[RMDB]
RNA sequence: GGGAACGACUCGAGUAGAGUCGAAAAGUUUGAGGCAAUCGGAAAAGACCCGCUCCAAGCCAUUGAAUCGGGUCAAAUCCGAGUAACUGAGGCUCAGUACAAGCAAGUCAAAGCGCUUGUUGAUACCGGCGAUCAGCAGUCCGCUGUAAAUGAGCUGACCAUUACAACUCUUCGGAGUUGUAAUGGUAAAAGAAACAACAACAACAAC
Reactivity to DMS in 0.01 (KOAc 150mM, MgCl2 10mM, bicine 150mM(pH8.5), 24C), signal-to-noise 2, nucleotides 027 to 156: g020u000u000u020g000a170g000g040c030a120a090u000c070g010g030a030a060a170a300g000a060c000c000c000g030c270u000c020c030a050a070g020c230c250a190u010u000g010a040a050u000c000g000g000g000u000c090a010a070a300u000c020c000g000a050g040u000a060a040c020u000g000a180g030g030c030u020c030a030g010u010a010c030a180a030g000c020a020a040g000u000c020a070a130a170g030c100g010c000u010u000g020u000u010g000a170u000a010c060c050g000g030c020g030a090u000c020a150g000c050a080g000u000c060c050g080c000u000g000u000a050a060a100u000g010a130g000c000u000g000
Reactivity to 2A3 in 0.01 (KOAc 150mM, MgCl2 10mM, bicine 150mM(pH8.5), 24C), signal-to-noise 2, nucleotides 027 to 156: g020u050u060u110g030a030g010g030c040a070a080u000c000g000g030a040a050a000a060g000a010c000c000c010g020c020u010c040c020a070a140g070c050c160a150u000u070g030a020a050u090c000g000g010g000u000c000a160a000a000u000c000c000g020a000g030u030a030a000c010u020g060a030g030g040c010u000c000a000g030u070a030c010a070a010g010c030a050a040g030u050c070a230a180a070g070c090g010c100u030u010g030u020u070g020a050u030a080c010c030g020g010c030g020a040u040c040a000g050c000a020g080u060c040c040g000c020u010g020u100a020a090a100u050g000a030g000c000u030g040